Description:
Chemical mapping of a 207-nucleotide RNA with 2A3 and DMS. The 2A3 profile rests on 4,509 reads. Source: RMDB library RNAMAK, as collected in RNAgym.
[RMDB]
RNA sequence: GGGAACGACUCGAGUAGAGUCGAAAAACCUUUGUGUAGGAGGACCCAUCCUUGGAUUUAUGGGUGCCAUUAAUUCCCAUUGGGAAUUAAGGCGGACCCAUUGUCAGGAUGCUAACUCCUACACUCUGGUAAACAUGACGUGCUUCGGCACGUCAUGCAGUCGACAAGGAUUCGUCCUUGUCGACUGAAAAGAAACAACAACAACAAC
Reactivity to 2A3 in 0.01 (KOAc 150mM, MgCl2 10mM, bicine 150mM(pH8.5), 24C), signal-to-noise 4, nucleotides 027 to 156: a010c000c000u010u000u000g000u010g010u000a010g000g010a020g020g020a020c020c000c000a000u000c000c010u100u180g240g020a090u300u300u090a010u040g000g000g010u020g040c000c000a110u010u010a000a010u000u020c030c010c100a210u200u300g000g000g000a000a000u010u000a010a020g020g000c070g040g170a110c010c000c000a000u000u000g020u000c000a000g010g000a000u000g000c000u010a050a010c000u000c000c000u000a000c000a000c000u000c010u000g000g020u040a080a090a000c000a000u000g000a000c000g010u000g000c000u020u100c130g100g000c000a000c000g000u000c000a000u000g000
Reactivity to DMS in 0.01 (KOAc 150mM, MgCl2 10mM, bicine 150mM(pH8.5), 24C), signal-to-noise 1, nucleotides 027 to 156: a030c010c000u000u000u010g000u000g040u000a000g000g000a000g000g000a140c300c300c010a030u000c020c000u010u000g060g010a020u000u010u000a030u010g030g000g030u000g010c020c000a150u010u000a000a000u000u000c020c000c010a300u000u000g020g020g000a040a020u000u010a000a010g010g060c170g030g040a040c000c020c000a000u000u010g000u020c020a040g000g010a040u010g020c010u010a100a300c000u000c000c000u000a020c010a000c000u000c010u000g030g020u000a130a080a150c000a000u020g000a020c000g040u000g000c000u000u020c300g050g030c000a000c000g030u000c000a010u000g010